[RMDB]
RNA sequence: GGGAACGACUCGAGUAGAGUCGAAAAUUGUGCGCCCGGAGCUCUGUGUGCACGGCAGACCUCUCUGCUGCCGCCAGCCGCUGCUUUUGGACCCCAGGGAGGGAUGGAUCCCCGUGAGCGAGGCCUGUGUAUUUCUUUUCUUCGGAAAAGAAAUACAAAAAGAAACAACAACAACAAC
Reactivity to DMS in 0.01 (KOAc 150mM, MgCl2 10mM, bicine 150mM(pH8.5), 24C), signal-to-noise 3, nucleotides 027 to 126: u010u000g010u000g030c070g010c040c020c050g020g020a170g010c090u000c030u000g030u010g010u010g010c050a100c020g010g020c010a030g000a110c060c040u000c040u010c020u000g020c040u000g000c060c040g000c110c070a120g010c030c120g010c100u000g000c030u000u020u000u010g020g000a130c020c020c050c030a080g000g010g010a080g010g020g010a060u000g000g000a140u010c040c020c010c120g000u010g000a070g010c030g000a070g010g010c040c050u010g010
Reactivity to 2A3 in 0.01 (KOAc 150mM, MgCl2 10mM, bicine 150mM(pH8.5), 24C), signal-to-noise 1, nucleotides 027 to 126: u090u080g010u030g010c000g040c010c040c020g020g040a020g020c060u030c070u180g000u020g050u090g110c040a000c000g030g020c000a000g020a090c010c010u070c010u000c010u020g020c050u030g050c020c000g100c060c010a030g020c020c030g110c120u100g000c000u110u120u120u100g070g030a130c000c010c040c000a010g020g000g000a050g000g000g000a030u050g060g010a060u040c040c000c000c010g040u050g010a040g000c030g010a030g020g010c000c060u080g010